[RMDB]
RNA sequence: GGGAACGACUCGAGUAGAGUCGAAAAAGGCAGCUUCCCGGCUUUUAAGCUACGGACGAUGCAAACGUAGCAGGCAUCGAAUUUUCGGCCCUUCGAAAAGCUGAGAUCAGCUCAGCAAGGGAAUCAAGCUCGGGAUAAUAUUCGUAUUAUCCCGAGCAAAAGAAACAACAACAACAAC
Reactivity to DMS in 0.01 (KOAc 150mM, MgCl2 10mM, bicine 150mM(pH8.5), 24C), signal-to-noise 1, nucleotides 027 to 126: a000g000g020c040a030g000c140u000u000c000c020c010g030g050c020u040u000u010u000a070a060g000c070u000a010c040g000g010a050c100g010a080u000g000c080a050a140a210c030g020u000a000g020c030a200g000g020c060a020u000c040g040a090a170u000u000u030u000c020g000g020c040c000c060u000u010c080g000a100a070a090a080g000c000u000g000a070g020a300u000c230a060g000c000u000c000a000g000c070a070a040g000g000g030a050a080u000c140a070a090